[RMDB]
The record gives the reactivity of an RNA of 177 nucleotides to DMS and 2A3. The reactions ran in a buffer of 150 mM KOAc, 10 mM MgCl2 and 150 mM bicine (pH 8.5), at 24 C.
RNA sequence: GGGAACGACUCGAGUAGAGUCGAAAAUAGACUGAUUGGAGUCCUAUCCAGUCUCUUCAGACCUAAGAAAAGGCCAAUUUAUAAAUCAGAUGUGGAGAUGGCUCACUUCCGUUAAAGUAUGAAAAAACCAUACAGUUCCGUUCGCGGAACUGUAUGGAAAAGAAACAACAACAACAAC
Reactivity to DMS in 0.01 (KOAc 150mM, MgCl2 10mM, bicine 150mM(pH8.5), 24C), signal-to-noise 1, nucleotides 027 to 126: u020a160g010a050c050u000g000a040u030u010g000g000a030g000u010c060c060u000a250u000c070c050a070g000u020c000u010c030u020u030c170a150g000a040c050c010u000a040a110g010a030a080a140a060g010g040c000c050a080a100u030u000u020a090u000a070a090a050u010c050a050g020a050u000g000u000g000g000a010g000a050u000g020g000c040u000c010a070c050u020u000c000c060g000u010u010a060a110a140g000u000a060u020g010a000a030a110a100a070a170
Reactivity to 2A3 in 0.01 (KOAc 150mM, MgCl2 10mM, bicine 150mM(pH8.5), 24C), signal-to-noise 1, nucleotides 027 to 126: u130a000g020a000c000u020g000a020u080u070g110g020a020g000u030c000c000u030a080u050c050c000a000g000u020c000u030c070u180u020c090a300g000a180c020c000u040a160a080g090a130a180a040a000g000g070c030c020a080a000u190u300u010a300u090a130a010a090u050c070a020g030a090u070g100u070g280g000a050g030a070u200g030g040c000u000c000a030c020u000u000c000c000g050u060u090a070a020a070g070u120a240u220g030a050a040a040a040a000a070
Source information
Values are in units of 0.01, from 0 to 300, in steps of 10. It was measured as part of the RMDB library OK2TRN. DMS adducts were read by reverse transcription with MarathonRT.